[RMDB]
RNA sequence: GGGAACGACUCGAGUAGAGUCGAAAACAUGCGGUACGAAUGGAGUUAUGGCAUGCGAAAGGAUGGCGCAGUCGUAGUUCUCGUGGCUCGUCGUCCGUACGGAAACCAUCCACGUACGGAAACCAUCCGGAGGUCGAUGGAAGAUAAUGUGGUGGCACCAAUCGACAUUCUUCGGAAUGUCGAUUGGAAAAGAAACAACAACAACAAC
Reactivity to 2A3 in 0.01 (KOAc 150mM, MgCl2 10mM, bicine 150mM(pH8.5), 24C), signal-to-noise 2, nucleotides 027 to 156: c060a060u110g000c050g030g030u050a010c030g050a170a090u160g070g020a070g000u200u080a020u090g030g000c050a040u050g040c020g070a090a060a000g070g010a080u090g020g000c000g000c070a000g010u000c040g010u060a060g040u100u030c060u040c050g040u120g030g000c010u000c030g040u020c070g020u040c020c010g010u010a000c000g020g070a090a000a150c000c030a030u000c030c010a020c020g020u020a000c000g000g000a080a050a080c040c020a020u050c040c060g030g010a050g030g000u090c050g000a000u060g030g050a070a010g030a060u190a120a030u110g030u040g000g000u000g000g000c010a000